[RMDB]
RNA sequence: GGGAACGACUCGAGUAGAGUCGAAAAAGUCUCUACCUCGGAGGAGAAAGACCGUAGCGAUGGGGGAGAUGCUAGGAGUAGGCGGCGACCGAAGCGAGGAGGAAAGCAAAGAAAGCCACGGGGCUAGGUAGUACCAGGUUCGCCUGGUACAAAAGAAACAACAACAACAAC
Reactivity to 2A3 in 0.01 (KOAc 150mM, MgCl2 10mM, bicine 150mM(pH8.5), 24C), signal-to-noise 8, nucleotides 027 to 129: a010g030u010c010u010c020u050a100c020c010u020c030g040g020a020g020g020a060g040a040a090a010g060a040c020c040g060u080a010g040c040g050a090u140g020g000g010g060g010a020g000a010u100g030c050u060a030g000g030a040g010u080a030g040g020c010g010g010c040g010a020c000c010g000a020a000g040c040g020a010g010g000a000g000g030a030a020a010g010c050a010a060a070g090a050a070a010g030c020c010a060c070g060g020g020g000c010u020a040g030g020u040a050
Reactivity to DMS in 0.01 (KOAc 150mM, MgCl2 10mM, bicine 150mM(pH8.5), 24C), signal-to-noise 7, nucleotides 027 to 129: a120g020u030c030u000c020u000a040c070c010u020c100g060g030a090g000g000a070g000a060a070a050g000a060c060c010g040u000a050g010c150g040a040u060g010g010g000g000g000a010g000a060u040g030c070u000a010g030g010a070g040u020a000g000g050c100g000g040c130g000a050c020c040g000a090a080g000c130g000a050g010g040a000g040g020a030a030a050g060c200a060a040a050g030a080a090a070g020c030c050a090c130g060g000g010g000c060u010a010g010g010u040a090